[RMDB]
RNA sequence: GGGAACGACUCGAGUAGAGUCGAAAAGAUAGGCCGUUGGUCAAAACUAUAAUUGUUAGUUCUCAGAUAGUAGGUUCACUUGAUAGGAGAGCAAUAUGUCGUGAAUUUGACAAUCUACAAUACAAGGGAUCCGUGUGGAAUUCGUUCCACACGGAUCAAAAGAAACAACAACAACAAC
Reactivity to DMS in 0.01 (KOAc 150mM, MgCl2 10mM, bicine 150mM(pH8.5), 24C), signal-to-noise 1, nucleotides 027 to 126: g000a140u000a200g020g030c000c010g020u000u000g060g000u000c010a000a020a090a140c060u020a060u020a190a120u000u020g020u000u010a040g020u000u020c060u000c060a170g000a150u020a030g020u000a000g030g010u010u000c020a100c020u000u000g000a060u000a140g020g020a070g010a060g000c030a000a080u000a020u000g000u000c020g000u000g000a100a030u000u010u020g010a040c000a050a060u010c080u000a050c150a070a050u010a060c120a100a190g010g010
Reactivity to 2A3 in 0.01 (KOAc 150mM, MgCl2 10mM, bicine 150mM(pH8.5), 24C), signal-to-noise 1, nucleotides 027 to 126: g040a040u050a110g000g020c020c110g300u120u300g040g070u020c050a060a060a000a060c050u120a060u070a280a070u020u050g050u070u040a060g010u080u060c040u010c000a000g010a110u040a020g030u010a010g050g000u080u050c000a000c020u070u080g060a020u130a120g040g090a140g020a000g010c000a100a070u090a010u120g030u000c010g000u000g030a040a070u130u130u110g040a010c000a000a060u060c000u160a140c090a060a130u160a130c090a030a060g160g080

This 177-nucleotide RNA was probed chemically with DMS and 2A3. The DMS profile rests on 639 reads. The 2A3 profile rests on 454 reads.